RNA sequence: GGGAACGACUCGAGUAGAGUCGAAAAAGGAAGUUGCCCCACACACAGAUUGCCCCGAUGUCCAACCAGAAGAAGUGAAACUGCUGCUGGGUCUGGAGAGGUGAAGACCCGUGGCCAGCUUCUGUUGAGAAUCUUUACAAUUCGUUGUAAAGAUUCUAAAAGAAACAACAACAACAAC
Reactivity to DMS in 0.01 (KOAc 150mM, MgCl2 10mM, bicine 150mM(pH8.5), 24C), signal-to-noise 9, nucleotides 027 to 126: a090g000g010a070a080g010u010u000g000c050c020c010c030a090c120a070c100a090c100a060g000a100u010u010g010c020c000c010c020g010a070u010g000u010c030c030a090a110c090c040a070g010a060a040g010a060a060g010u010g010a080a070a140c090u010g010c010u000g000c010u020g030g000g000u000c020u010g010g010a130g000a090g010g010u010g010a140a030g000a020c010c000c000g020u000g000g000c080c120a080g010c030u000u000c010u000g010u000u010g000
Reactivity to 2A3 in 0.01 (KOAc 150mM, MgCl2 10mM, bicine 150mM(pH8.5), 24C), signal-to-noise 9, nucleotides 027 to 126: a000g120g020a050a020g040u050u050g040c000c000c020c000a020c000a000c000a000c000a030g090a090u050u110g050c000c000c000c010g040a050u060g030u040c010c020a020a030c020c010a030g020a060a010g020a040a010g080u060g090a120a070a050c050u050g010c000u010g010c020u130g010g000g010u000c010u030g080g040a150g020a040g050g110u130g050a030a010g010a010c000c000c010g000u010g010g000c020c020a020g000c000u020u000c010u040g070u050u050g010